Source: RMDB library TTRDES, as collected in RNAgym. Structure probing data (DMS and 2A3) for a 177-nucleotide construct. The DMS profile rests on 5,626 reads. High 2A3 reactivity points to a flexible backbone, as in loops and unpaired stretches. For 2A3 the reverse transcriptase was SuperScript II with manganese.

[RMDB]
RNA sequence: GGGAACGACUCGAGUAGAGUCGAAAAGAUAUGGAGAUAUGGAAGAGCGAUGAAAUACUUCGGAAACGAAGUAUGGAGCUCCCAUGAUCUCCUAAGUCAAAGUCUUUGUUCUUCGGAACAAAGACAACAAGGAAAGAUGGUUCGCCAUCUUUCCUUGAAAAGAAACAACAACAACAAC
Reactivity to DMS in 0.01 (KOAc 150mM, MgCl2 10mM, bicine 150mM(pH8.5), 24C), signal-to-noise 5, nucleotides 027 to 126: g000a040u000a220u020g000g000a010g030a050u000a010u000g010g020a300a200g010a040g030c000g010a100u020g000a150a150a000u000a000c000u000u000c020g010g000a060a020a050c010g000a010a020g010u000a000u000g000g000a040g000c010u000c100c020c000a010u010g000a010u000c000u010c010c000u000a010a060g000u000c020a090a140a160g000u000c000u010u000u000g000u000u000c000u000u000c260g020g000a020a000c000a010a000a000g010a010c000a050a120
Reactivity to 2A3 in 0.01 (KOAc 150mM, MgCl2 10mM, bicine 150mM(pH8.5), 24C), signal-to-noise 2, nucleotides 027 to 126: g000a000u020a020u070g000g000a020g010a010u030a010u030g090g020a300a300g010a300g050c000g100a130u020g000a000a000a000u000a000c000u010u000c000g000g000a000a000a000c000g000a000a000g000u000a000u010g000g000a000g020c000u010c020c000c010a010u120g100a070u000c000u000c020c000u000a020a000g020u000c010a160a140a080g000u020c000u000u000u000g020u000u000c020u030u040c300g170g000a000a000c000a000a000a010g020a000c000a000a020